[RMDB]
RNA sequence: GGGAACGACUCGAGUAGAGUCGAAAAGAAACAUGGUUCGCCAUGUUUCAAAGAAGCUCAUAAUGACGCAAACAACGGCGUCGCCGUGAGCAAACGGCGUAAAAAGACUUAUCUUCGGAUAAGUCAACCUAAUUUAUCUGUUCGCAGAUAAAUUAGGAAAAGAAACAACAACAACAAC
Reactivity to DMS in 0.01 (KOAc 150mM, MgCl2 10mM, bicine 150mM(pH8.5), 24C), signal-to-noise 6, nucleotides 027 to 126: g000a010a010a010c000a010u000g000g010u000u020c230g020c010c000a010u000g000u000u000u000c000a060a060a120g010a100a140g020c010u000c010a040u000a090a080u000g010a020c010g000c010a040a080a130c240a110a110c220g010g000c000g000u000c010g010c120c090g030u000g010a040g000c040a040a100a060c080g010g010c110g000u020a040a040a060a100a070g000a020c000u000u000a010u000c000u000u010c200g020g000a020u000a010a010g010u000c000a020a040
Reactivity to 2A3 in 0.01 (KOAc 150mM, MgCl2 10mM, bicine 150mM(pH8.5), 24C), signal-to-noise 5, nucleotides 027 to 126: g000a000a000a010c000a000u000g010g020u050u050c070g030c050c000a000u010g000u000u020u000c000a000a010a000g050a060a020g010c000u010c040a040u060a150a090u190g010a010c000g010c010a060a190a210c070a170a100c170g100g010c000g010u000c000g000c000c020g020u030g010a030g010c010a000a050a000c040g070g000c060g070u120a010a050a050a050a040g000a000c000u010u000a000u010c010u020u070c220g050g000a000u000a000a010g000u010c000a000a000